An RNA of 177 nucleotides, treated with DMS and 2A3 and read out base by base. Reactivities are given for positions 27 through 126.
RNA sequence: GGGAACGACUCGAGUAGAGUCGAAAAUGGCGACGCGUUCGCGCGCGCGGAGCCGAUCUUCGCCACCGUCGCGCCGGGGGUGGCGGCCGCCCCGCGCACCCCGGGCCGAGACGGUGAGGUCGCGCCAGCCUACACACCUAUUCGUAGGUGUGUAGGCAAAAGAAACAACAACAACAAC
Reactivity to DMS in 0.01 (KOAc 150mM, MgCl2 10mM, bicine 150mM(pH8.5), 24C), signal-to-noise 3, nucleotides 027 to 126: u010g010g020c010g010a140c010g030c030g020u000u010c240g000c080g030c060g000c000g020c000g010g010a190g000c070c020g000a090u010c050u010u010c070g000c120c010a040c020c000g000u000c010g000c080g010c010c000g010g000g000g010g030u010g010g000c010g000g010c120c200g010c200c210c000c000g020c020g030c000a030c000c000c000c000g000g010g000c040c040g010a070g010a020c000g010g010u010g010a030g000g020u010c040g000c050g000c070c120a140
Reactivity to 2A3 in 0.01 (KOAc 150mM, MgCl2 10mM, bicine 150mM(pH8.5), 24C), signal-to-noise 2, nucleotides 027 to 126: u090g010g010c000g020a040c010g010c010g020u060u080c040g010c010g000c020g010c010g010c000g060g000a020g020c000c000g100a140u030c060u110u110c060g160c060c000a010c020c000g010u020c010g000c010g030c030c000g060g000g000g000g010u020g020g030c090g030g000c080c020g080c030c050c000c010g000c020g220c010a060c000c010c010c010g050g000g000c100c030g000a030g000a010c000g000g000u000g020a060g050g040u150c060g010c010g000c050c010a020
For DMS the reverse transcriptase was MarathonRT. The reactions ran in a buffer of 150 mM KOAc, 10 mM MgCl2 and 150 mM bicine (pH 8.5), at 24 C. The DMS profile rests on 3,618 reads. The data come from the RNA Mapping Database (RMDB), library OK2TRN.